This 177-nucleotide RNA was probed chemically with DMS and 2A3. For 2A3, 1,599 sequencing reads were counted. The RNA was probed in 150 mM KOAc, 10 mM MgCl2 and 150 mM bicine (pH 8.5) at 24 C.

RNA sequence: GGGAACGACUCGAGUAGAGUCGAAAACUGUUCUGUUGCAAGCAGUGACCUUUCAACUGGUUGCUGUGGAGAACCUUGCAAAUAUUUAAAAUACGGAUGGUAUCGGAGAAUUUGAAGGAUUUUUAAAGACCUUAGUAUUUUUCGAAAUACUAAGGUCAAAAGAAACAACAACAACAAC
Reactivity to DMS in 0.01 (KOAc 150mM, MgCl2 10mM, bicine 150mM(pH8.5), 24C), signal-to-noise 3, nucleotides 027 to 126: c030u000g000u010u020c080u010g020u000u020g020c040a090a170g010c000a000g020u010g000a030c010c000u020u030u040c300a100a110c220u020g000g000u010u000g000c010u010g000u000g010g010a070g000a060a080c030c030u000u020g000c000a010a020a020u010a080u010u040u000a100a130a080a070u020a020c060g000g020a090u010g010g010u010a060u010c020g010g010a110g000a040a050u010u000u000g030a020a070g000g000a080u000u000u000u010u020a020a100a180
Reactivity to 2A3 in 0.01 (KOAc 150mM, MgCl2 10mM, bicine 150mM(pH8.5), 24C), signal-to-noise 3, nucleotides 027 to 126: c020u010g050u120u000c020u040g120u080u060g010c050a020a030g000c010a010g010u000g000a020c000c000u030u270u220c170a170a080c140u070g000g010u000u000g000c010u000g000u040g020g000a050g020a000a000c000c000u000u060g100c020a000a040a020u120a170u120u240u200a040a070a050a010u100a040c050g120g070a120u140g220g040u020a050u100c030g050g090a040g050a080a130u020u050u080g030a040a040g050g000a040u060u030u000u050u280a080a080a030